[RMDB]
An RNA of 177 nucleotides, treated with DMS and 2A3 and read out base by base. 2A3 adducts were read by reverse transcription with SuperScript II with manganese.

RNA sequence: GGGAACGACUCGAGUAGAGUCGAAAAGAUAUGGAUAGCUCUGCGAGAGUAUCUCGGAAACGAGCCGAGCUCCGCAGUGAGGCUAUCCUAAGUCAAAGCAAUAAUGUGCUUCGGCACAUUAUUGCAACCUACUAUAUGCCUUCGGGCAUAUAGUAGGAAAAGAAACAACAACAACAAC
Reactivity to DMS in 0.01 (KOAc 150mM, MgCl2 10mM, bicine 150mM(pH8.5), 24C), signal-to-noise 5, nucleotides 027 to 126: g010a060u000a300u010g010g000a030u000a010g000c000u000c000u000g010c000g000a190g010a020g020u000a080u010c020u000c000g000g000a100a090a180c180g010a110g000c300c080g010a090g000c000u000c000c010g000c000a010g000u010g020a110g020g000c000u000a010u000c000c000u010a020a070g010u000c050a100a110a120g010c000a010a010u000a000a010u000g010u000g000c000u000u010c220g020g010c000a010c000a000u000u000a010u000u000g000c000a020a040
Reactivity to 2A3 in 0.01 (KOAc 150mM, MgCl2 10mM, bicine 150mM(pH8.5), 24C), signal-to-noise 5, nucleotides 027 to 126: g010a020u100a050u160g000g000a010u000a010g010c020u010c000u300g030c010g010a300g010a020g300u090a300u120c010u000c010g030g050a250a300a170c150g030a130g140c050c010g020a020g030c000u000c000c000g000c030a000g030u100g210a120g030g000c000u010a000u000c000c000u000a120a000g040u010c070a140a070a030g000c000a000a000u000a000a000u010g010u000g000c000u050u100c190g050g000c000a000c000a000u010u010a000u000u000g000c000a000a000